[RMDB]
Structure probing data (DMS) for a 177-nucleotide construct.
Conditions: 150 mM KOAc, 10 mM MgCl2 and 150 mM bicine (pH 8.5), 24 C.
For DMS, 796 sequencing reads were counted.
The data come from the RNA Mapping Database (RMDB), library RFMREP.
RNA sequence: GGGAACGACUCGAGUAGAGUCGAAAAGUAGCAGCGGGCCCGUGAAAUCUGCUGUGAAUCUGUCGGGACCACCCGAUAAGCCUGAAUACUCCCUGGUGACCGAUAGCGGACUAGUACCGUGAGGGAAGCUAUAUCGAUGGUUCGCCAUCGAUAUAGCAAAAGAAACAACAACAACAAC
Reactivity to DMS in 0.01 (KOAc 150mM, MgCl2 10mM, bicine 150mM(pH8.5), 24C), signal-to-noise 2, nucleotides 027 to 126: g000u000a150g010c060a010g030c010g020g000g000c030c040c030g100u000g010a010a040a130u010c010u000g000c010u000g020u000g000a090a130u000c050u000g010u000c060g000g010g010a290c190c300a100c040c010c010g000a010u000a050a090g010c070c050u000g000a130a080u030a170c110u010c030c010c020u030g010g020u000g010a130c040c000g000a090u000a090g030c010g000g000a120c050u010a120g020u000a060c030c020g010u000g000a170g000g010g000a090a150